[RMDB]
RNA sequence: GGGAACGACUCGAGUAGAGUCGAAAAACGUUGAUAUGGAUUUACUCCGAGGAGACGAACUACCACGAACAGGGGAACCUCUACCCGUGGCGUCUCCGUUUGACGAGUAAGUCAUAAGUCAACAUGCUGCCAAAGAGGUUCGCCUCUUUGAAAAGAAACAACAACAACAAC
Reactivity to DMS in 0.01 (KOAc 150mM, MgCl2 10mM, bicine 150mM(pH8.5), 24C), signal-to-noise 9, nucleotides 027 to 129: a070c160g010u010u020g020a020u010a200u080g030g000a040u000u010u010a020c010u020c000c000g010a070g000g040a050g010a000c030g020a130a050c120u070a270c000c000a010c020g000a090a190c250a060g000g000g000g040a100a090c050c020u020c060u010a170c140c090c020g020u010g010g030c040g000u000c010u030c000c000g000u020u030u040g000a130c300g020a020g000u030a020a010g030u030c010a040u000a000a150g010u000c020a030a000c010a060u020g010c050u060g020c150
Reactivity to 2A3 in 0.01 (KOAc 150mM, MgCl2 10mM, bicine 150mM(pH8.5), 24C), signal-to-noise 9, nucleotides 027 to 129: a000c080g000u000u000g000a010u020a040u200g060g000a010u000u000u000a000c000u000c000c000g020a040g000g000a000g020a000c010g010a080a060c110u200a090c090c000a000c010g050a130a030c050a150g000g010g010g030a050a120c030c020u070c030u070a060c020c020c010g000u000g000g000c000g000u000c000u000c000c000g010u080u030u080g020a010c010g000a000g000u000a000a000g000u000c000a000u020a030a030g010u000c000a000a000c000a010u120g050c030u080g030c020